[RMDB]
RNA sequence: GGGAACGACUCGAGUAGAGUCGAAAAGGGCUGGUUGCUUCACAAAGGCAGGGGCCUGGAUCUGCAUCCUCCCCAGGACCUCGCCCUGGUGGAGGGGCACUUGCUCAUUGAGGAGGGGUCACCUGGGUAACAAAACUUAAUUCGUUAAGUUUUGUUAAAAAGAAACAACAACAACAAC
Reactivity to DMS in 0.01 (KOAc 150mM, MgCl2 10mM, bicine 150mM(pH8.5), 24C), signal-to-noise 9, nucleotides 027 to 126: g010g010g010c050u000g010g020u000u000g010c020u000u010c080a100c180a080a130a130g000g010c020a070g000g010g010g020c030c030u000g000g010a090u010c080u000g000c040a110u010c010c000u000c020c010c000c000a020g000g000a090c030c100u000c170g000c050c000c000u000g010g010u010g030g000a020g000g000g000g010c030a080c080u000u000g010c030u000c050a150u000u010g000a080g010g000a110g010g010g010g010u000c050a070c050c020u000g000g000g010
Reactivity to 2A3 in 0.01 (KOAc 150mM, MgCl2 10mM, bicine 150mM(pH8.5), 24C), signal-to-noise 6, nucleotides 027 to 126: g020g010g010c030u040g040g150u090u060g030c020u090u090c060a050c060a130a180a020g050g000c020a020g040g020g040g000c000c000u010g020g030a080u030c040u080g000c020a120u070c010c010u010c010c000c000c000a010g010g000a100c030c060u050c120g050c030c010c000u000g000g030u200g020g020a020g010g000g000g010c010a020c030u080u130g010c010u020c050a150u050u180g050a050g020g030a030g010g020g000g000u020c000a040c090c010u030g000g040g030
The record gives the reactivity of an RNA of 177 nucleotides to DMS and 2A3. High 2A3 reactivity points to a flexible backbone, as in loops and unpaired stretches. 2A3 adducts were read by reverse transcription with SuperScript II with manganese. For 2A3, 12,914 sequencing reads were counted. It was measured as part of the RMDB library OK2TRN. The RNA was probed in 150 mM KOAc, 10 mM MgCl2 and 150 mM bicine (pH 8.5) at 24 C.